[RMDB]
RNA sequence: GGGAACGACUCGAGUAGAGUCGAAAAGGGUAAGUUCCGACCUGCACGAAAGGCGCAACGACUUGGGCGCUGUCUCAACCAUGGACCCGGUGAAAUUCCACUAGUCGUGAAGAUGCGACUUACCCGCAUUGAAACCGUACUUCGGUACGGUUUCAAUAAAAGAAACAACAACAACAAC
Reactivity to DMS in 0.01 (KOAc 150mM, MgCl2 10mM, bicine 150mM(pH8.5), 24C), signal-to-noise 3, nucleotides 027 to 126: g000g020g020u000a000a010g000u010u010c070c040g010a060c070c020u000g000c040a060c080g010a070a070a130g040g000c010g060c070a070a060c080g000a100c110u050u020g020g010g000c040g010c000u000g000u000c050u020c100a100a160c210c240a080u010g000g020a060c050c070c060g000g020u020g040a030a040a160u020u030c050c010a050c090u000a070g010u010c010g000u000g000a080a070g000a100u020g000c110g000a050c000u000u010a000c020c000c010g020c170
Reactivity to 2A3 in 0.01 (KOAc 150mM, MgCl2 10mM, bicine 150mM(pH8.5), 24C), signal-to-noise 4, nucleotides 027 to 126: g020g000g000u030a010a000g040u130u050c030c000g020a080c010c020u010g020c020a030c070g070a140a020a010g020g000c000g000c010a040a080c040g200a030c110u170u170g050g020g010c030g000c040u030g050u000c020u040c010a090a170c050c010a050u100g040g010a010c000c000c040g000g000u020g030a080a070a070u170u030c050c000a030c040u050a020g030u000c010g000u000g040a050a020g020a040u200g040c050g010a000c010u000u000a010c010c000c000g000c010